[RMDB]
RNA sequence: GGGAACGACUCGAGUAGAGUCGAAAAGCUGCGGGUCUCGACCUCGUUAUCCUCGCAGGAAAGGAGUACGGCUCUGGCUCGUCCCGUGACUGGGCUGCCAAGGGUCCGAAGCUGCAAGGCGUGAAGGGGUUAUAGACCGUUUCGACGGUCUAUAACCAAAAGAAACAACAACAACAAC
Reactivity to 2A3 in 0.01 (KOAc 150mM, MgCl2 10mM, bicine 150mM(pH8.5), 24C), signal-to-noise 2, nucleotides 027 to 126: g030c020u040g030c020g010g040g030u040c040u040c020g110a160c020c030u080c030g060u040u080a050u070c000c020u050c020g000c020a000g040g060a080a080a020g090g050a050g030u030a020c030g020g000c010u020c010u020g040g020c010u060c130g160u110c020c000c010g020u010g010a020c090u070g000g020g020c020u020g000c010c020a090a070g040g010g010u000c000c020g030a040a030g050c010u020g030c030a020a070g030g000c040g040u130g060a090a050g110g030
Reactivity to DMS in 0.01 (KOAc 150mM, MgCl2 10mM, bicine 150mM(pH8.5), 24C), signal-to-noise 3, nucleotides 027 to 126: g020c050u000g010c090g010g000g010u000c020u050c100g010a170c130c060u000c030g010u020u010a100u000c020c000u000c090g010c060a060g000g000a050a070a130g010g000a060g000u000a170c200g010g000c010u000c010u000g010g000c010u000c180g020u010c000c000c020g020u010g010a120c260u020g030g000g000c090u000g000c010c030a010a100g000g000g000u000c000c010g030a100a110g010c020u010g000c100a060a080g000g000c130g000u000g000a070a070g010g010
Chemical mapping of a 177-nucleotide RNA with 2A3 and DMS. Conditions: 150 mM KOAc, 10 mM MgCl2 and 150 mM bicine (pH 8.5), 24 C.